Structure probing data (2A3 and DMS) for a 177-nucleotide construct. The data come from the RNA Mapping Database (RMDB), library RFM100. For 2A3 the reverse transcriptase was SuperScript II with manganese. The reactions ran in a buffer of 150 mM KOAc, 10 mM MgCl2 and 150 mM bicine (pH 8.5), at 24 C.
[RMDB]
RNA sequence: GGGAACGACUCGAGUAGAGUCGAAAAUCGACGGGGCAUGAGGAGGGUGACUGAAGCCUGCUCGGUCAGAGCGAACCCGUAACAGCGAACAACAUCGUUCGUUUCUCCCGUCAAGCCGCCCCCGUGGGUUCCAAUUGCCCUUCGGGGCAAUUGGAACAAAAGAAACAACAACAACAAC
Reactivity to 2A3 in 0.01 (KOAc 150mM, MgCl2 10mM, bicine 150mM(pH8.5), 24C), signal-to-noise 1, nucleotides 027 to 126: u130c000g010a000c000g000g000g000g000c130a140u300g040a000g010g230a010g000g000g000u000g070a000c020u160g090a040a040g000c000c000u000g000c000u030c010g000g080u300c050a000g000a000g050c000g000a030a060c000c000c000g000u050a010a010c000a020g050c000g020a010a010c070a000a000c060a300u070c150g000u010u000c000g000u000u070u040c000u000c000c000c000g000u010c000a000a000g010c070c040g100c000c000c000c000c000g040u050g010g000
Reactivity to DMS in 0.01 (KOAc 150mM, MgCl2 10mM, bicine 150mM(pH8.5), 24C), signal-to-noise 2, nucleotides 027 to 126: u000c160g040a000c000g000g050g010g020c300a160u000g000a100g000g000a300g000g040g000u040g070a100c300u000g050a140a210g000c010c000u000g050c010u000c010g000g030u010c120a180g020a170g000c020g000a130a150c030c000c010g050u000a070a100c280a140g000c030g000a000a000c000a120a250c160a020u040c130g000u010u000c090g000u000u000u000c000u000c000c000c000g000u000c000a210a090g010c120c180g010c000c000c000c000c000g040u040g000g000

For 2A3, 476 sequencing reads were counted.